About this RNA: An RNA of 177 nucleotides, treated with DMS and 2A3 and read out base by base. High 2A3 reactivity points to a flexible backbone, as in loops and unpaired stretches. It was measured as part of the RMDB libraries RFM100 and RFMREP.
RNA sequence: GGGAACGACUCGAGUAGAGUCGAAAAGAAAGAAAGAAAACCAAUGUUGUCAAUGAUGCAUUCAUCCGGAACUGAAUUUAAGUGAUCUAACUCAAAUUCGUCACUACCACUGAGACAACAUUGAGAAGAUGUGCCUGAUCUUCGGAUCAGGCACAUCAAAAGAAACAACAACAACAAC
Reactivity to DMS in 0.01 (KOAc 150mM, MgCl2 10mM, bicine 150mM(pH8.5), 24C), signal-to-noise 1, nucleotides 027 to 126: g020a170a190a150g070a080a100a000g000a060a040a020a130c290c000a000a060u000g000u000u000g020u000c000a080a140u040g000a170u000g020c150a060u010u000c120a000u000c120c160g060g040a080a000c300u040g000a000a000u000u000u020a100a000g000u000g000a080u030c070u110a140a000c000u000c050a040a000a010u000u000c000g040u110c050a060c150u030a030c200c060a000c170u000g000a300g000a000c070a000a000c000a000u000u000g000a070g000a040a000
Reactivity to 2A3 in 0.01 (KOAc 150mM, MgCl2 10mM, bicine 150mM(pH8.5), 24C), signal-to-noise 3, nucleotides 027 to 126: g090a010a040a000g140a010a020a010g160a000a130a000a000c010c010a020a020u000g000u000u000g000u010c010a100a020u110g080a090u050g150c060a090u050u190c010a040u070c080c060g070g030a070a040c050u240g010a010a010u010u050u060a010a040g010u010g160a180u050c140u300a060a000c030u020c030a010a000a030u010u050c050g040u010c010a020c240u130a060c030c040a020c040u040g050a010g000a080c030a000a000c000a000u000u020g000a030g020a040a000